[RMDB]
RNA sequence: GGGAACGACUCGAGUAGAGUCGAAAAUCAGGUUAUAGUAAAUAUGUCACUGUUCAGGGACCACCUGGCACUGGCAAAAGUCAUUUUGCUAUAGGGUUAGCGAUUUACUACCCUACAGCACGUGUUGAAGGCUCCUGCUUCGGCAGGAGCAAAAGAAACAACAACAACAAC
Reactivity to DMS in 0.01 (KOAc 150mM, MgCl2 10mM, bicine 150mM(pH8.5), 24C), signal-to-noise 2, nucleotides 027 to 129: u010c000a150g000g000u000u050a110u070a040g010u000a090a000a010u080a070u000g050u000c010a120c300u000g030u000u000c000a000g010g010g060a300c060c200a090c070c030u000g110g000c100a000c070u070g010g060c000a060a070a000a080g020u170c050a110u020u090u040u010g000c000u000a080u000a040g060g030g030u000u110a020g070c080g000a220u000u000u120a150c070u000a000c070c060c000u000a000c100a070g040c040a100c300g000u070g060u020u010g020a170a080g000
Reactivity to 2A3 in 0.01 (KOAc 150mM, MgCl2 10mM, bicine 150mM(pH8.5), 24C), signal-to-noise 1, nucleotides 027 to 129: u060c000a020g110g090u060u220a220u090a110g010u070a000a060a200u080a000u000g010u000c000a040c000u010g000u250u100c020a000g000g000g090a150c000c000a130c030c000u020g000g040c000a000c000u000g000g000c000a010a120a000a000g120u120c030a000u000u130u050u000g030c000u000a000u000a000g010g010g010u020u050a000g000c010g060a070u090u050u170a000c020u010a060c000c000c000u000a000c000a010g000c000a000c030g010u000g000u010u000g050a040a010g080